[RMDB]
RNA sequence: GGGAACGACUCGAGUAGAGUCGAAAAAGAAAAGCGCUUGAGAAGAUCACUGAUAGCCAAAAACGCGAUUAUAAACGGAAAUCUAUGAGCAACAGCGUCCGGCCUAACCGAAAGAUGCCGAAAAAAAGCCUAAAGUAUUGUUCGCAAUACUUUAGGCAAAAGAAACAACAACAACAAC
Reactivity to 2A3 in 0.01 (KOAc 150mM, MgCl2 10mM, bicine 150mM(pH8.5), 24C), signal-to-noise 1, nucleotides 027 to 126: a020g080a000a040a020a010g030c050g020c120u020u130g080a040g050a190a050g000a040u030c020a000c030u030g060a050u060a030g000c080c100a040a040a090a070a080c050g050c040g020a030u120u050a120u170a170a030a000c040g010g040a090a000a000u000c020u010a080u060g040a010g040c050a000a040c010a020g020c000g060u040c030c030g010g000c000c010u030a080a060c020c000g000a070a010a000g070a030u090g020c000c000g100a130a000a000a000a000a020a020
Reactivity to DMS in 0.01 (KOAc 150mM, MgCl2 10mM, bicine 150mM(pH8.5), 24C), signal-to-noise 2, nucleotides 027 to 126: a090g000a110a040a140a140g020c060g010c060u000u030g000a150g000a080a050g030a090u000c030a050c090u000g020a090u010a050g040c020c030a040a060a050a080a060c100g010c060g000a030u010u010a140u010a060a160a120c040g030g010a040a070a040u010c090u000a060u000g010a120g030c050a070a070c080a050g000c060g010u010c050c030g020g000c010c070u000a050a090c090c030g000a020a030a030g010a030u000g030c030c020g000a000a000a030a050a070a080a150